[RMDB]
RNA sequence: GGGAACGACUCGAGUAGAGUCGAAAAGAUAUGGAGACAGACACUUGCAUUGAGCCACAGAGCGACUAUCGGAAACGAUAGAAUCGCGACGAAGUGGAUUCAAUGCAAGUGUCUGUCUCCUAAGUCACUCUCUAAGAUGGUUCGCCAUCUUAGAGAGAAAAGAAACAACAACAACAAC
Reactivity to DMS in 0.01 (KOAc 150mM, MgCl2 10mM, bicine 150mM(pH8.5), 24C), signal-to-noise 1, nucleotides 027 to 126: g000a030u010a300u000g000g000a030g000a010c000a000g010a000c020a010c000u000u000g020c010a000u020u000g000a000g010c000c000a000c000a060g000a220g000c000g000a000c000u000a000u010c000g010g010a120a080a190c010g010a010u000a010g010a080a080u000c000g020c020g020a190c300g000a140a080g010u020g000g000a050u010u000c000a010a000u000g000c010a000a000g020u000g010u000c000u000g000u000c000u000c000c000u000a000a040g000u000c050a260

Structure probing data (DMS) for a 177-nucleotide construct. The DMS profile rests on 1,653 reads. Values cover nucleotides 27 to 126. The reactions ran in a buffer of 150 mM KOAc, 10 mM MgCl2 and 150 mM bicine (pH 8.5), at 24 C.